[RMDB]
RNA sequence: GGGAACGACUCGAGUAGAGUCGAAAAGGUCUAACCUUCGGGUUAGACCAAAAUAAGAGCAAAGCGUAGCUCAGCUGCAAACGCAAAAAGCUGCAAAGCGAAAAACCCGCCAGUUCGCUGGCGGGAAGAAACAUAUCCAGUUCGCUGGAUAUGUUUCAAAAGAAACAACAACAACAAC
Reactivity to 2A3 in 0.01 (KOAc 150mM, MgCl2 10mM, bicine 150mM(pH8.5), 24C), signal-to-noise 1, nucleotides 027 to 126: g010g000u000c000u010a000a000c000c000u020u110c300g010g000g010u010u000a010g000a000c000c000a000a000a000a000u010a020a010g010a000g030c050a120a170a000g020c000g070u050a010g000c000u020c070a030g030c010u080g010c010a100a130a070c030g000c030a010a020a080a110a090g000c000u030g030c010a070a010a060g000c030g090a130a010a040a010a040c020c000c000g000c000c000a020g000u050u050c150g010c100u010g030g010c050g000g000g000a000a000
Reactivity to DMS in 0.01 (KOAc 150mM, MgCl2 10mM, bicine 150mM(pH8.5), 24C), signal-to-noise 2, nucleotides 027 to 126: g010g010u000c010u000a000a020c000c010u010u010c190g040g010g020u000u050a000g000a020c000c000a030a000a080a040u010a150a180g000a110g000c020a040a060a130g010c050g000u000a070g010c020u000c020a240g040c080u000g040c200a070a170a050c150g000c020a060a040a070a080a050g010c010u000g030c150a090a110a090g000c020g010a040a080a070a180a150c000c000c010g010c000c000a010g010u000u000c200g020c020u010g020g000c000g000g010g000a000a000

The record gives the reactivity of an RNA of 177 nucleotides to 2A3 and DMS. For DMS, 976 sequencing reads were counted. In probing experiments dimethyl sulfate is read out at A N1 and C N3, which are open when not base-paired. It was measured as part of the RMDB library M2PK50.